[RMDB]
RNA sequence: GGGAACGACUCGAGUAGAGUCGAAAAAGAAGGAGCCGUUCCACGCAGGACGCGAACAAGAAGAAGCCGAAGCAACUUCAGGUCGCCGCGCACGUUCUGGCGCUCGAUCUCCGCCUCGCUCGAGUAGGUUUCCCCGGGGAUCCCUCUUCGAGCCCUCGUUAAAGGCGAUGUUCGCAUCGCCUUUAACAAAAGAAACAACAACAACAAC
Reactivity to 2A3 in 0.01 (KOAc 150mM, MgCl2 10mM, bicine 150mM(pH8.5), 24C), signal-to-noise 1, nucleotides 027 to 156: a030g060a030a030g060g020a020g000c000c000g060u090u040c050c060a070c070g000c040a040g070g040a100c030g030c020g080a040a040c110a130a110g130a040a000g000a030a010g070c080c130g160a100a000g050c060a050a080c010u000u010c000a010g090g080u030c020g000c130c020g000c060g000c000a070c090g030u120u030c070u170g050g000c020g000c030u010c000g050a060u020c020u040c030c010g000c010c010u000c000g000c000u000c000g010a020g010u020a040g070g150u010u040u030c000c000c000c000g010g030g010g020a050u100c090c020c000u040c000u130u070c050g010a030g040c000c000c000u050c060